RNA sequence: GGGAACGACUCGAGUAGAGUCGAAAAGACGAAUUCUCGAUGGUAUGCUCAUCGAUUACUUUACAUAUAUGUCAGUUGCUCAUCGACAUGAGAUGGCUCAUAAAUGUGGUGUUCCAGUAUCCACUAAACUCGGAGUCCUAUUCGUAGGACUCCGAGUAAAAGAAACAACAACAACAAC
Reactivity to 2A3 in 0.01 (KOAc 150mM, MgCl2 10mM, bicine 150mM(pH8.5), 24C), signal-to-noise 2, nucleotides 027 to 126: g050a000c080g020a040a080u070u010c020u010c010g000a010u010g000g050u220a150u300g090c040u040c030a010u030c030g030a010u050u040a040c050u110u070u090a060c070a070u190a030u040a040u210g050u020c060a030g050u070u060g030c040u040c030a030u010c090g180a150c030a120u080g000a030g000a110u050g040g000c000u040c070a170u140a180a070a070u080g010u040g020g000u000g000u000u030c000c000a000g020u030a050u060c020c020a000c000u060a210a060
Reactivity to DMS in 0.01 (KOAc 150mM, MgCl2 10mM, bicine 150mM(pH8.5), 24C), signal-to-noise 2, nucleotides 027 to 126: g000a090c130g030a070a220u000u000c080u000c000g020a060u010g000g010u010a100u020g000c180u000c030a060u010c040g000a050u010u000a030c070u000u010u010a090c050a100u000a100u000a050u000g000u010c150a040g010u000u020g020c010u000c030a040u010c200g040a140c130a100u010g000a060g000a080u020g000g020c010u000c040a050u000a020a050a100u010g000u000g000g000u000g000u000u010c020c050a070g020u010a120u010c020c030a080c110u000a050a030